[RMDB]
RNA sequence: GGGAACGACUCGAGUAGAGUCGAAAAACAUAUUACGAUAUGAUUCAGAUGGUGUCUUACUGGUUCGCACCAAGGGACAUAAUGGUUUCUUGUUUCCAACCAAAGAACAAGUGGCGAGCCUGAAUAAAAAACUGACUGCCGUUCGCGGCAGUCAGAACUGGCUAUGUUAGUUCGCUAACAUAGCCAGAAAAGAAACAACAACAACAAC
Reactivity to 2A3 in 0.01 (KOAc 150mM, MgCl2 10mM, bicine 150mM(pH8.5), 24C), signal-to-noise 2, nucleotides 027 to 156: a000c020a010u110a030u120u200a070c130g110a030u050a030u110g060a060u080u150c090a110g040a200u120g080g110u030g010u020c090u080u130a110c040u000g000g020u030u110c110g000c010a060c000c020a010a010g010g000g000a000c030a040u140a070a140u140g070g020u020u040u000c000u010u000g010u040u080u030c000c000a040a040c010c010a210a040a000g000a000a050c010a000a070g050u010g090g020c020g000a010g040c000c000u010g080a050a020u110a090a030a000a000a050a070c000u000g000a000c000u000g000c020c010g020u050u040c180g000c000g250g000c000a000g000u030c000a000g000a000a000